Annotation
An RNA of 177 nucleotides, treated with 2A3 and DMS and read out base by base. DMS (dimethyl sulfate) methylates the pairing face of unpaired adenines and cytosines. It was measured as part of the RMDB library TTRDEL. DMS adducts were read by reverse transcription with MarathonRT. The RNA was probed in 150 mM KOAc, 10 mM MgCl2 and 150 mM bicine (pH 8.5) at 24 C.
RNA sequence: GGGAACGACUCGAGUAGAGUCGAAAAGAUAUGGAAAGCAUCGAUCAUGGGCCUUGGACCUCGGAAACGAGCUAGGCUGGCCAUGGGAGCUUUCCUAAGUCAAAACUCUCCACUUCGGUGGAGAGAACAUAAGCUCAGGGUUCGCCCUGAGCUUAUGAAAAGAAACAACAACAACAAC
Reactivity to 2A3 in 0.01 (KOAc 150mM, MgCl2 10mM, bicine 150mM(pH8.5), 24C), signal-to-noise 2, nucleotides 027 to 126: g000a010u070a040u100g000g000a010a020a020g030c030a220u220c060g240a040u170c030a020u080g130g000g110c010c020u050u090g130g130a300c050c000u000c030g000g000a060a070a040c040g010a010g000c020u030a000g010g000c030u070g110g120c060c000a000u000g020g080g050a020g000c000u010u000u000c000c000u000a070a000g010u000c020a000a020a060a300c010u000c010u060c000c000a010c000u070u030c300g130g000u000g000g020a010g000a000g010a000a000
Reactivity to DMS in 0.01 (KOAc 150mM, MgCl2 10mM, bicine 150mM(pH8.5), 24C), signal-to-noise 2, nucleotides 027 to 126: g000a070u010a300u010g010g000a020a000a020g020c000a210u010c060g000a120u000c010a020u000g010g010g000c000c010u000u000g010g000a090c280c020u010c010g020g000a080a090a120c020g020a030g000c020u000a030g000g050c040u000g010g000c050c000a000u000g000g000g000a060g010c010u010u000u000c000c000u000a010a080g010u010c030a070a090a100a150c000u000c000u000c010c000a010c000u000u000c090g020g000u000g000g000a000g010a000g000a030a060